[RMDB]
An RNA of 177 nucleotides, treated with 2A3 and DMS and read out base by base.
Values are in units of 0.01, from 0 to 300, in steps of 10.
Values cover nucleotides 27 to 126.
Source: RMDB library OK2TRN, as collected in RNAgym.
RNA sequence: GGGAACGACUCGAGUAGAGUCGAAAAUCCAUGGUCUCGGGGCACUUGAAUCGUCUCAAGCAACGAAACUCCCUCGGACCUUCAAGGGAUGGCACCAACUACGCCGUGGUUCACUGCACGGGUUAUACACUGAUGUUAACUUCGGUUAACAUCAGUGAAAAGAAACAACAACAACAAC
Reactivity to 2A3 in 0.01 (KOAc 150mM, MgCl2 10mM, bicine 150mM(pH8.5), 24C), signal-to-noise 5, nucleotides 027 to 126: u000c010c000a050u030g000g000u040c080u080c130g010g000g000g000c130a020c140u040u060g040a040a040u080c050g090u000c050u020c150a060a030g020c060a040a050c030g030a040a000a020c020u040c020c000c000u010c010g000g000a010c000c000u020u100c060a040a030g150g000g000a020u030g040g020c030a040c070c010a070a050c040u140a050c070g080c090c020g020u020g010g050u130u150c120a090c190u130g010c020a010c020g010g000g030u040u070a080u020a030
Reactivity to DMS in 0.01 (KOAc 150mM, MgCl2 10mM, bicine 150mM(pH8.5), 24C), signal-to-noise 6, nucleotides 027 to 126: u000c010c010a110u010g000g000u000c030u000c080g010g010g010g010c300a100c120u010u010g000a070a190u010c070g010u000c040u000c130a080a120g020c220a110a060c040g000a030a080a200c110u000c090c000c000u000c090g000g000a020c020c020u010u000c160a090a100g000g000g000a050u010g010g000c100a180c020c020a090a070c160u010a070c090g020c020c000g010u000g000g000u000u000c170a130c190u010g000c030a030c020g010g010g010u000u010a080u010a180